An RNA of 177 nucleotides, treated with 2A3 and DMS and read out base by base. Source: RMDB library M2PK50, as collected in RNAgym. The DMS profile rests on 6,898 reads. The reactions ran in a buffer of 150 mM KOAc, 10 mM MgCl2 and 150 mM bicine (pH 8.5), at 24 C.
[RMDB]
RNA sequence: GGGAACGACUCGAGUAGAGUCGAAAAACUUCCUACUUCGGUAGGAAGUAAAAGUAGAAAAGUUGGUGCAUAGACCACGCCCUCUACCGUAAUAAUAGAUAAACCCUUAGCACUUCGGUGCUAAGAAUACUAAACUUUCAUUCGUGAAAGUUUAGUAAAAAGAAACAACAACAACAAC
Reactivity to 2A3 in 0.01 (KOAc 150mM, MgCl2 10mM, bicine 150mM(pH8.5), 24C), signal-to-noise 5, nucleotides 027 to 126: a000c000u000u000c000c000u000a000c000u020u030c090g100g000u010a010g030g020a000a000g000u000a000a000a000a000g010u000a000g030a010a040a010a000g050u110u060g040g010u060g050c120a250u160a160g110a030c000c000a000c020g000c000c010c000u020c000u010a020c000c020g040u040a060a100u080a180a020u050a160g130a070u160a120a140a090c040c010c000u000u000a000g010c010a000c010u030u060c270g070g010u000g000c000u000a000a000g000a000a000
Reactivity to DMS in 0.01 (KOAc 150mM, MgCl2 10mM, bicine 150mM(pH8.5), 24C), signal-to-noise 6, nucleotides 027 to 126: a050c000u000u010c010c000u000a000c000u010u010c170g040g010u010a000g010g000a000a010g010u000a020a030a090a100g020u000a020g000a030a020a020a030g050u020u000g010g010u000g010c240a150u020a160g000a030c010c000a020c020g000c020c030c040u000c010u000a010c010c090g010u000a080a060u010a090a070u010a110g000a120u000a070a090a140c100c040c000u000u000a010g000c000a010c000u000u010c200g010g010u000g010c010u000a000a000g000a080a080